RNA sequence: GGGAACGACUCGAGUAGAGUCGAAAAUUGAAGGUAAAACAGCCUCUGGGUGAAACACACCCACAGGGCCCAUUGGGCGCUAGCACUCUGGUAUCACGGUACCUUUGUGCGCCUGUUUUACCGAAGGGGGGGAGGGUGUUCGCACCCUCCAAAAGAAACAACAACAACAAC
Reactivity to 2A3 in 0.01 (KOAc 150mM, MgCl2 10mM, bicine 150mM(pH8.5), 24C), signal-to-noise 3, nucleotides 027 to 129: u130u110g070a100a010g000g000u000a010a000a000a000c000a000g000c000c000u010c020u010g000g000g000u020g030a060a050a020c120a000c000a010c030c000c000a000c010a000g000g000g000c000c000c020a030u300u300g010g000g010c010g010c090u090a040g000c020a000c010u020c000u000g000g000u000a020u020c030a060c240g170g010u010a010c010c000u000u000u000g000u000g000c000g000c000c000u000g000u010u000u000u000a000c000c000g000a000a000g020g020g010g010g010
Reactivity to DMS in 0.01 (KOAc 150mM, MgCl2 10mM, bicine 150mM(pH8.5), 24C), signal-to-noise 4, nucleotides 027 to 129: u000u010g040a200a180g000g000u020a020a030a000a050c020a080g030c030c020u030c210u010g000g030g040u020g050a080a030a080c190a170c000a030c000c000c000a020c070a010g010g000g000c060c000c020a040u110u150g000g000g010c050g000c000u080a040g050c010a020c020u040c000u080g030g010u000a040u030c050a180c240g100g010u000a020c030c000u110u000u000g010u000g010c040g040c000c030u020g010u060u000u000u050a000c010c000g000a040a030g050g020g000g040g000